[RMDB]
RNA sequence: GGGAACGACUCGAGUAGAGUCGAAAAGAUGACUGGGACGAUGACGAGGCGGCCCCCCUGCCCACGCUGCCCCAGGCCCAGGAGGAGCAGCGGCCCCCCUGGCAGCGCACCGGUGGGACGGAUGUGGCGGACGUUAAGUUUUCGAACUUAACGUCCGAAAAGAAACAACAACAACAAC
Reactivity to DMS in 0.01 (KOAc 150mM, MgCl2 10mM, bicine 150mM(pH8.5), 24C), signal-to-noise 1, nucleotides 027 to 126: g020a090u030g000a090c050u000g000g010g010a050c040g000a050u000g000a130c060g000a090g010g010c040g010g000c000c000c010c010c010c010u010g000c050c040c050a060c050g030c030u000g010c010c020c020c020a060g010g000c070c010c010a050g020g000a150g000g010a030g000c010a040g010c040g020g020c030c020c020c030c000c040u000g020g010c040a080g010c080g000c060a070c070c030g000g050u000g010g000g040a010c110g000g010a070u000g000u010g020g020
Structure probing data (DMS) for a 177-nucleotide construct.